[RMDB]
RNA sequence: GGGAACGACUCGAGUAGAGUCGAAAAGGACCGCCCAUCGGGGCUAAGGCCAUACGGACAGCCGGGUCCACUGCCGAAAAGAAAACAAAACAAAACAAAAACAAAACAAAACAAAAACAAAAGAAAAGCAGUACUAGGACUUCGGUCCUGGUACUGCAAAAGAAACAACAACAACAAC
Reactivity to DMS in 0.01 (KOAc 150mM, MgCl2 10mM, bicine 150mM(pH8.5), 24C), signal-to-noise 2, nucleotides 027 to 126: g000g000a000c000c020g000c000c000c000a140u030c300g000g000g000g000c000u130a020a020g000g020c000c000a050u040a130c060g000g000a140c060a100g000c000c010g000g000g010u000c000c000a080c130u000g000c000c000g000a300a050a070a080g000a120a000a160a120c170a080a130a080a040c120a090a020a140a180c160a080a120a090a020a140c120a120a060a040a070c140a030a000a020a060c210a060a030a070a110a030c080a060a010a140a100g000a130a160a090a150
Reactivity to 2A3 in 0.01 (KOAc 150mM, MgCl2 10mM, bicine 150mM(pH8.5), 24C), signal-to-noise 3, nucleotides 027 to 126: g000g010a000c010c000g020c020c010c000a110u250c100g070g040g000g000c020u060a070a130g040g000c000c000a040u050a070c010g010g040a010c000a020g000c000c000g040g010g000u000c000c000a010c020u040g000c010c020g060a110a040a000a000g100a010a050a020a030c040a030a050a060a030c020a010a090a010a010c070a040a110a000a030a050c100a010a130a000a020c050a020a090a010a010c090a020a130a040a000a000c050a030a050a080a000g120a040a110a000a030